[RMDB]
RNA sequence: GGGAACGACUCGAGUAGAGUCGAAAAUCACCUGCGCCUGGUUGGGCUACACAGCCACAUCGGUUCGCAGAUCUUCGACGUGGACGGCUUCGAACUCGCCGCGCACCGUGUCAUCGGCCUGCUACGCACAUGCUUAGGUUUUCGAACCUAAGCAUGUAAAAGAAACAACAACAACAAC
Reactivity to DMS in 0.01 (KOAc 150mM, MgCl2 10mM, bicine 150mM(pH8.5), 24C), signal-to-noise 9, nucleotides 027 to 126: u010c130a130c120c010u000g010c030g020c300c010u000g010g020u000u000g000g010g010c010u010a110c300a120c290a030g010c000c010a030c050a030u000c020g000g010u000u010c030g010c020a040g000a080u010c080u000u010c040g000a060c050g000u000g010g000a080c090g000g000c030u000u000c060g000a040a120c130u000c080g010c040c040g020c070g000c040a050c050c050g000u000g000u010c060a050u010c040g000g000c030c020u000g010c050u000a060c110g010c130
Reactivity to 2A3 in 0.01 (KOAc 150mM, MgCl2 10mM, bicine 150mM(pH8.5), 24C), signal-to-noise 5, nucleotides 027 to 126: u060c010a040c030c010u010g010c020g000c010c020u040g030g010u090u050g010g020g030c000u100a070c210a020c040a110g030c010c000a080c000a030u040c040g080g000u180u170c020g000c020a010g020a110u020c040u070u080c040g080a090c020g020u060g040g070a060c020g030g000c000u070u070c100g070a120a100c030u020c080g040c030c010g020c010g000c020a030c040c020g030u040g040u060c040a060u070c020g030g020c010c010u040g040c010u060a030c040g000c030